[RMDB]
RNA sequence: GGGAACGACUCGAGUAGAGUCGAAAAAUUGAGUAAUGGAGGUAGAGCACUGAAUGGGCUAGGGGCUGACAACAGUUACUGAACCCUAUCAAACUCCGAAUGCCAUAUACUUUUAUCCAGGCAGUCAGCCACACAUAAACUUCGGUUUAUGUGUGGCAAAAGAAACAACAACAACAAC
Reactivity to DMS in 0.01 (KOAc 150mM, MgCl2 10mM, bicine 150mM(pH8.5), 24C), signal-to-noise 1, nucleotides 027 to 126: a110u020u000g000a000g030u000a010a030u010g000g000a030g000g030u000a030g010a030g010c040a040c140u000g000a020a300u010g000g000g000c000u010a280g000g000g000g000c000u000g010a130c300a100a230c080a020g060u000u000a050c030u000g000a110a190c000c000c000u000a120u000c000a020a080a110c000u000c030c050g000a090a160u020g000c030c000a020u000a060u010a020c020u000u000u030u000a030u010c060c000a070g060g030c200a090g000u000c170a130